[RMDB]
RNA sequence: GGGAACGACUCGAGUAGAGUCGAAAAUCAUACAGGCGACGGCUCUCUUCCUGCAUGACAUGGACAAUCACAUCGCCCAAAUCCACGACAAUCCAGUCGGCGCUGUUUUCACCUUCUACGCCGAGCGUGUAAGCCUAAAUUUCGAUUUAGGCUUACAAAAAGAAACAACAACAACAAC
Reactivity to 2A3 in 0.01 (KOAc 150mM, MgCl2 10mM, bicine 150mM(pH8.5), 24C), signal-to-noise 6, nucleotides 027 to 126: u070c010a020u070a180c030a050g080g000c030g040a040c050g080g000c020u030c000u020c010u080u020c000c000u010g040c030a050u070g040a030c010a040u080g040g020a030c040a030a060u090c020a030c020a130u050c050g030c010c010c010a040a100a020u040c020c010a040c040g080a020c040a050a030u050c040c020a040g040u020c010g010g000c010g010c010u040g060u050u010u050u080c050a070c010c000u050u030c010u040a010c000g040c070c000g020a010g030c030g020
Reactivity to DMS in 0.01 (KOAc 150mM, MgCl2 10mM, bicine 150mM(pH8.5), 24C), signal-to-noise 9, nucleotides 027 to 126: u010c050a080u010a090c100a080g010g010c210g010a090c080g010g000c020u000c030u000c050u000u000c030c010u000g010c050a040u000g010a050c080a060u000g010g010a070c110a070a090u010c070a060c090a120u000c080g010c020c010c030a050a080a120u010c040c040a050c040g010a050c090a070a090u010c080c060a080g010u000c030g010g010c040g020c070u000g000u000u000u000u000c060a080c090c060u000u000c020u000a060c030g010c060c000g000a050g010c130g010